[RMDB]
RNA sequence: GGGAACGACUCGAGUAGAGUCGAAAAGCAUUAUCCUGCGCUCGCAGGCCUGUCUCGUUUCGGCCCGCCGCAGCCAUACCAGCCGCCGCGUAGAAGAGAUCGCGGCACGCAUUCGCGCGGGACUGGACGUCAGGUAGCGAUUCGUCGCUACCUGACGAAAAGAAACAACAACAACAAC
Reactivity to 2A3 in 0.01 (KOAc 150mM, MgCl2 10mM, bicine 150mM(pH8.5), 24C), signal-to-noise 2, nucleotides 027 to 126: g040c070a110u100u070a080u290c000c020u020g020c040g030c030u050c080g000c020a030g040g000c000c010u100g010u000c050u000c070g070u040u060u080c020g020g000c000c020c040g060c030c020g020c020a010g060c000c050a130u190a120c020c020a020g050c020c030g070c000c000g000c030g030u060a050g040a300a040g050a040g000a030u080c030g000c000g020g050c020a000c010g000c000a050u100u080c020g000c000g060c000g030g000g080a130c000u030g000g020a040
Reactivity to DMS in 0.01 (KOAc 150mM, MgCl2 10mM, bicine 150mM(pH8.5), 24C), signal-to-noise 2, nucleotides 027 to 126: g000c080a110u000u000a150u000c030c040u000g000c050g020c150u010c110g000c050a110g020g000c130c010u010g000u000c050u000c110g000u000u010u010c040g020g000c010c020c040g020c010c050g000c070a120g000c090c120a130u000a070c110c120a160g000c050c120g000c010c050g040c000g000u000a130g000a090a180g000a140g000a080u000c080g030c010g010g020c030a010c080g000c030a190u000u000c100g040c020g000c020g000g000g000a080c040u000g000g000a300
The record gives the reactivity of an RNA of 177 nucleotides to 2A3 and DMS. For DMS, 964 sequencing reads were counted. DMS adducts were read by reverse transcription with MarathonRT.